RNA sequence: GGGAACGACUCGAGUAGAGUCGAAAAGCUCGACGGCGAGCGCUUCAUCGAAUGGAAUUUCGUCGCGAGCUCGCGCGACACGAUCGAGCGGGCGAAGCGCGCGUGGGCGGCGCAGCAGAUGGGGACAUACGAUAUAUACUUUCGAGUAUAUAUCGUAAAAAGAAACAACAACAACAAC
Reactivity to DMS in 0.01 (KOAc 150mM, MgCl2 10mM, bicine 150mM(pH8.5), 24C), signal-to-noise 9, nucleotides 027 to 126: g010c010u000c010g010a110c060g010g010c020g010a050g010c130g010c080u000u000c030a090u000c090g010a070a180u010g010g010a100a100u000u000u000c030g020u000c060g010c090g010a290g010c010u000c020g020c040g010c020g000a050c050a130c190g000a160u000c020g010a040g010c020g000g000g010c030g010a060a090g010c020g010c030g010c050g020u000g000g010g010c050g010g010c040g010c050a070g010c040a060g000a090u000g010g000g000g010a120c150a170
Reactivity to 2A3 in 0.01 (KOAc 150mM, MgCl2 10mM, bicine 150mM(pH8.5), 24C), signal-to-noise 9, nucleotides 027 to 126: g010c000u010c020g080a090c030g060g060c020g010a030g000c050g020c030u070u060c020a110u060c040g100a120a100u130g080g180a090a130u060u100u070c040g030u030c030g010c030g060a010g020c000u010c010g000c000g000c010g020a020c040a040c210g080a160u030c010g010a010g020c020g000g000g000c040g040a080a030g000c020g000c010g000c010g020u070g010g040g030c030g010g000c030g000c010a010g010c010a010g020a080u100g020g000g000g010a010c020a060